[RMDB]
RNA sequence: GGGAACGACUCGAGUAGAGUCGAAAAGAUAUGGAAGACAGCUAUGAAGCGAGGGAUCGGAAACGAUCCUCGUGGAGCUGUGUUCCUAAGUCAAACAAUGCAAAGGGGUUCGCCCCUUUGCAUUGAACGUUUAUUAUGGCUUCGGCCAUAAUAAACGAAAAGAAACAACAACAACAAC
Reactivity to DMS in 0.01 (KOAc 150mM, MgCl2 10mM, bicine 150mM(pH8.5), 24C), signal-to-noise 3, nucleotides 027 to 126: g000a020u000a230u010g000g000a020a020g010a010c000a000g010c010u000a190u020g000a210a210g000c000g020a020g000g000g010a020u000c010g000g000a100a040a100c000g010a020u000c000c000u000c010g010u000g000g010a030g000c000u000g020u000g000u000u000c000c000u010a020a130g010u000c030a120a070a250c000a010a000u000g000c000a000a010a010g010g020g010g010u000u000c300g010c000c000c000c000u000u000u000g000c000a010u000u010g010a060a160
Reactivity to 2A3 in 0.01 (KOAc 150mM, MgCl2 10mM, bicine 150mM(pH8.5), 24C), signal-to-noise 3, nucleotides 027 to 126: g010a010u050a010u110g000g030a010a010g070a050c000a010g020c010u090a130u300g140a200a020g000c010g000a050g100g210g100a050u030c020g030g000a020a030a030c010g020a000u000c000c010u000c000g000u000g040g010a000g000c000u010g000u000g030u020u000c000c010u020a090a000g010u000c020a020a050a070c010a030a000u010g000c000a000a000a000g060g000g000g030u090u190c300g210c000c000c000c020u020u000u010g000c000a000u000u000g000a010a000